[RMDB]
RNA sequence: GGGAACGACUCGAGUAGAGUCGAAAAGGCAAGGCUCGGGUAAGAAGUUGCGAAGCCUUGGGUAAGAAGCUGGCGGCAAACGCCGAGUUCAUUCUCUGUGCAAAGCAUGAUCCGAUCCAAGAUGGUGCGUGAGUGCUAUAUUCGUAUAGCACUCACGAAAAGAAACAACAACAACAAC
Reactivity to 2A3 in 0.01 (KOAc 150mM, MgCl2 10mM, bicine 150mM(pH8.5), 24C), signal-to-noise 5, nucleotides 027 to 126: g070g000c070a010a060g050g000c030u000c020g030g050g030u100a110a080g140a080a010g200u170u090g060c060g040a070a020g010c020c000u060u070g010g000g000u090a130a100g030a020a020g070c040u030g010g010c000g000g000c100a230a120a110c080g000c000c010g000a010g020u000u040c040a110u130u040c020u000c000u050g040u020g030c040a110a070a060g030c010a020u050g020a040u030c000c030g020a040u010c020c010a000a030g110a090u210g070g050u070g040
Reactivity to DMS in 0.01 (KOAc 150mM, MgCl2 10mM, bicine 150mM(pH8.5), 24C), signal-to-noise 4, nucleotides 027 to 126: g000g050c020a040a170g020g000c050u010c010g030g000g000u000a080a060g000a100a080g040u010u000g010c060g020a170a150g010c000c000u000u010g010g000g020u010a050a060g000a100a040g000c030u000g010g020c010g000g000c180a090a080a170c030g030c000c010g010a040g000u010u000c180a130u030u000c040u020c000u010g000u020g000c050a050a070a240g000c020a030u010g010a070u000c050c030g000a080u010c010c020a100a130g010a040u040g000g020u030g010
The record gives the reactivity of an RNA of 177 nucleotides to 2A3 and DMS. DMS adducts were read by reverse transcription with MarathonRT. Reactivities are given for positions 27 through 126. The data come from the RNA Mapping Database (RMDB), library OK1LIB. The 2A3 profile rests on 3,667 reads.